[RMDB]
RNA sequence: GGGAACGACUCGAGUAGAGUCGAAAAAAGGGCUGCAUUCACAACUACCACAAACCACAUAAAGCGCGACCUUCAACGACGAAGGCUGCACUUCCCGAUAGAACGGGACCUGGACAAAGGCGUCCUCAUAGCUGUCUCAAUUCGUUGAGACAGCUAUAAAAGAAACAACAACAACAAC
Reactivity to DMS in 0.01 (KOAc 150mM, MgCl2 10mM, bicine 150mM(pH8.5), 24C), signal-to-noise 2, nucleotides 027 to 126: a050a090g000g000g030c000u000g000c040a040u010u000c040a060c040a080a080c090u000a170c050c080a070c090a030a050a200c050c040a080c090a150u020a020a050a050g020c010g000c020g000a140c010c000u000u010c000a150a140c150g040a120c160g010a080a010g020g000c020u020g000c000a030c090u000u000c030c070c010g090a080u000a070g020a090a090c060g030g020g000a100c080c000u020g000g000a060c120a040a120a130g010g000c090g030u020c010c030u000c160
Reactivity to 2A3 in 0.01 (KOAc 150mM, MgCl2 10mM, bicine 150mM(pH8.5), 24C), signal-to-noise 5, nucleotides 027 to 126: a000a000g070g010g000c050u070g000c010a030u070u100c040a010c010a150a070c050u070a070c010c020a030c070a090a140a030c060c010a050c000a130u190a060a110a010g010c040g000c020g050a120c020c010u020u000c070a170a120c110g200a010c080g000a040a010g040g000c010u040g000c010a010c040u070u070c010c000c000g030a070u060a150g080a090a020c010g000g010g030a000c000c040u070g040g010a020c050a020a070a010g090g040c020g020u020c010c000u040c020